[RMDB]
Description:
The data come from the RNA Mapping Database (RMDB), library RFM100. Chemical mapping of a 177-nucleotide RNA with 2A3 and DMS. For DMS, 989 sequencing reads were counted. The RNA was probed in 150 mM KOAc, 10 mM MgCl2 and 150 mM bicine (pH 8.5) at 24 C.
RNA sequence: GGGAACGACUCGAGUAGAGUCGAAAAACCAGACGUGGAGUCUGCGGCUCAAUCUGACUCAACGCGCGCACCUCACCAGGCCCGGACGCGCGGAGGACCGACAGCCGGGCGCGCUUUCGCGAUCGCGGGGACUGCCUAAUUUCGAUUAGGCAGUCCCAAAAGAAACAACAACAACAAC
Reactivity to 2A3 in 0.01 (KOAc 150mM, MgCl2 10mM, bicine 150mM(pH8.5), 24C), signal-to-noise 2, nucleotides 027 to 126: a000c000c000a010g010a040c060g020u060g130g060a030g000u020c020u050g010c050g080g020c010u040c100a050a040u020c060u080g060a010c040u040c020a060a080c050g000c000g000c010g010c070a070c000c000u050c010a070c020c040a050g050g000c000c040c070g100g000a100c060g050c010g000c040g010g000a030g020g060a040c000c040g030a020c010a030g050c020c000g010g010g000c020g000c010g000c000u030u070u090c030g000c020g080a150u070c020g000c040g010
Reactivity to DMS in 0.01 (KOAc 150mM, MgCl2 10mM, bicine 150mM(pH8.5), 24C), signal-to-noise 1, nucleotides 027 to 126: a050c020c000a000g000a070c060g010u020g000g000a150g000u000c040u000g040c060g000g000c050u070c110a080a040u000c100u000g000a030c000u000c020a160a080c070g000c010g000c080g000c000a170c070c000u020c080a090c170c130a090g080g040c040c010c040g000g030a300c050g000c150g000c010g010g000a040g000g050a180c140c010g000a040c130a000g000c050c060g000g050g000c100g000c040g000c000u000u000u070c110g000c110g000a130u110c110g020c180g000